[RMDB]
RNA sequence: GGGAACGACUCGAGUAGAGUCGAAAACAGCAGGACGCGCCUCCCGACCGUGUUAAUAACCACGUGGCGGCUGAGCAGAGUAAAUUCCUCGUGGUGUCCGCGCUGUCAGCUGUCGCGUGCCGCUGCACCCUCACCAGCGAUUCGUCGCUGGUGAGGGAAAAGAAACAACAACAACAAC
Reactivity to 2A3 in 0.01 (KOAc 150mM, MgCl2 10mM, bicine 150mM(pH8.5), 24C), signal-to-noise 2, nucleotides 027 to 126: c030a000g060c010a010g000g030a000c010g010c010g070c000c000u020c000c000c000g000a000c020c040g000u010g010u050u130a140a090u130a140a030c030c000a030c000g000u000g010g000c000g030g000c000u010g010a040g050c020a000g020a030g050u210a010a210a230u120u170c000c020u120c040g110u150g090g060u090g050u090c070c030g030c020g000c000u010g030u010c010a000g000c000u020g030u050c000g000c000g000u000g010c000c000g000c010u030g000c000a090